[RMDB]
RNA sequence: GGGAACGACUCGAGUAGAGUCGAAAAUUGAAGCGGACGUCGCAGCACGUGCUGAUGACGAAGGCUUCAUCACAUUAAAGAACAAUCUAUAUAGAUUGGUUUGGCAUGUUGAGCGUAAAGACGUUCCGUGGAACGUUCUGUUCGCAGAACGUUCCACAAAAGAAACAACAACAACAAC
Reactivity to 2A3 in 0.01 (KOAc 150mM, MgCl2 10mM, bicine 150mM(pH8.5), 24C), signal-to-noise 2, nucleotides 027 to 126: u070u030g010a000a000g000c000g020g070a020c010g000u010c000g020c010a000g010c060a040c290g190u240g010c020u000g010a300u140g000a010c030g030a080a090g010g000c000u030u000c000a000u000c000a010c000a030u120u150a170a050a020g010a010a040c000a000a000u000c000u090a080u060a060u160a300g000a040u040u000g100g000u060u030u000g030g010c000a000u030g010u070u120g030a020g000c020g020u070a040a070a090g080a010c010g000u000u030c020c020
Reactivity to DMS in 0.01 (KOAc 150mM, MgCl2 10mM, bicine 150mM(pH8.5), 24C), signal-to-noise 1, nucleotides 027 to 126: u000u000g000a020a040g000c000g030g000a300c000g010u000c000g000c040a020g060c000a300c300g010u000g000c010u000g000a070u000g000a010c010g010a000a300g000g000c000u010u020c000a100u020c170a010c010a040u000u000a060a170a090g020a010a050c000a000a000u000c000u020a220u000a150u000a040g020a020u000u000g000g020u000u000u010g000g010c300a020u000g020u010u020g000a070g000c060g000u000a070a160a030g000a120c050g010u000u000c010c040